[RMDB]
RNA sequence: GGGAACGACUCGAGUAGAGUCGAAAAGUCGGUGCAGUUUACGGUGAUGAAAUUCUGAGCGUGAACCAACUCGGCUCCGUGCUGACACCUUAUGGGUACGACAUCCCAGCAGUCACUGGAUUAGAGCCGAGGGCCGUAAAUUCGUUUACGGCCCUCGAAAAGAAACAACAACAACAAC
Reactivity to 2A3 in 0.01 (KOAc 150mM, MgCl2 10mM, bicine 150mM(pH8.5), 24C), signal-to-noise 1, nucleotides 027 to 126: g010u040c060g030g010u020g070c040a000g000u040u100u160a030c010g020g080u040g060a140u120g120a050a080a220u290u040c040u040g020a030g060c040g060u080g020a070a060c070c050a040a020c040u000c020g020g000c010u000c000c030g000u000g020c010u010g030a080c030a060c030c000u000u090a130u160g020g050g020u060a030c060g050a030c090a050u080c010c010c000a010g000c000a020g040u120c010a000c060u030g140g000a130u050u120a110g010a030g120c010
Reactivity to DMS in 0.01 (KOAc 150mM, MgCl2 10mM, bicine 150mM(pH8.5), 24C), signal-to-noise 2, nucleotides 027 to 126: g030u000c060g000g050u000g000c120a090g030u000u020u000a030c010g000g030u010g020a150u000g030a140a070a110u020u000c060u000g020a050g040c070g000u000g000a070a110c040c060a080a130c040u000c030g000g030c030u010c020c050g010u000g000c060u000g000a080c090a130c050c020u010u010a100u010g000g000g000u000a100c090g000a040c160a080u000c030c010c020a130g000c080a080g000u000c030a030c050u000g000g010a060u010u000a050g000a100g010c090
Conditions: 150 mM KOAc, 10 mM MgCl2 and 150 mM bicine (pH 8.5), 24 C. An RNA of 177 nucleotides, treated with 2A3 and DMS and read out base by base. 2A3 adducts were read by reverse transcription with SuperScript II with manganese. Reactivities are rounded to 0.1 and cut off at 0 and 3. The 2A3 profile rests on 949 reads.